Description
Structure probing data (2A3 and DMS) for a 177-nucleotide construct. 2A3 adducts were read by reverse transcription with SuperScript II with manganese. The 2A3 profile rests on 5,469 reads. The DMS profile rests on 7,017 reads.

[RMDB]
RNA sequence: GGGAACGACUCGAGUAGAGUCGAAAAAGAGUGGUCCGAUGAGUGGUUUGACCUCACCGAAAACCUAUGCGGUACUGGCAGCUCUGCAGGCGGGCGACGCGGUGGCGUGCGCCAUCCCGCUGCCACCCUGGGAUGAUAAGUUCGCUUAUCAUCCCAGAAAAGAAACAACAACAACAAC
Reactivity to 2A3 in 0.01 (KOAc 150mM, MgCl2 10mM, bicine 150mM(pH8.5), 24C), signal-to-noise 4, nucleotides 027 to 126: a000g080a000g030u080g010g040u030c020c030g030a050u050g020a040g120u140g050g050u100u090u160g070a090c020c010u040c040a050c030c040g060a040a040a040a060c020c040u080a100u200g040c040g020g020u060a070c060u020g020g000c010a010g000c020u040c040u110g060c050a040g000g060c030g010g030g010c020g010a030c010g020c060g100g050u100g090g020c040g020u110g070c050g010c000c010a020u010c000c000c000g020c010u030g010c010c000a020c030c020
Reactivity to DMS in 0.01 (KOAc 150mM, MgCl2 10mM, bicine 150mM(pH8.5), 24C), signal-to-noise 5, nucleotides 027 to 126: a060g010a080g010u010g000g000u000c050c020g010a040u000g010a090g030u010g010g020u000u000u000g020a180c110c030u010c090a060c090c030g000a090a040a070a060c040c040u000a090u010g010c020g010g010u010a040c120u000g010g020c010a110g000c150u000c030u000g020c080a040g010g010c070g000g000g010c110g010a050c030g010c090g020g020u000g010g010c020g020u000g010c030g020c020c010a040u000c010c010c030g020c080u000g010c010c020a080c150c070